[RMDB]
RNA sequence: GGGAACGACUCGAGUAGAGUCGAAAAGAUAUGGAGUGAAGCAAGAGUGUAAACAGCGAAGAACAUUAGUAUCGGAAACGAUACUAAUGGGAGCUGGAAGAAGCUUGAUGACCUUCACUCCUAAGUCCAAACUGAAACUCUUCGGAGUUUCAGUUUGAAAAGAAACAACAACAACAAC
Reactivity to DMS in 0.01 (KOAc 150mM, MgCl2 10mM, bicine 150mM(pH8.5), 24C), signal-to-noise 2, nucleotides 027 to 126: g000a150u000a300u010g000g000a010g010u000g000a050a000g000c000a070a170g000a000g020u000g010u000a020a150a300c000a000g010c010g000a150a150g020a080a220c010a000u000u000a020g000u000a000u010c030g000g000a030a120a030c000g000a030u000a000c000u010a040a000u000g000g000g000a020g050c000u000g000g010a000a150g000a140a300g000c000u000u000g000a210u000g010a090c300c000u000u000c040a000c040u000c000c000u000a010a040g000u000c010
Reactivity to 2A3 in 0.01 (KOAc 150mM, MgCl2 10mM, bicine 150mM(pH8.5), 24C), signal-to-noise 1, nucleotides 027 to 126: g030a000u000a040u300g030g000a000g000u010g010a000a010g000c040a190a300g000a000g000u230g000u020a000a030a000c030a000g020c020g280a300a050g000a060a010c040a010u020u010a000g000u030a020u010c000g000g070a090a080a020c030g000a030u010a020c010u000a010a000u020g000g000g000a030g000c000u000g000g020a050a230g010a010a000g040c010u080u150g070a230u140g010a300c000c020u000u000c000a030c040u000c000c000u010a040a010g020u000c000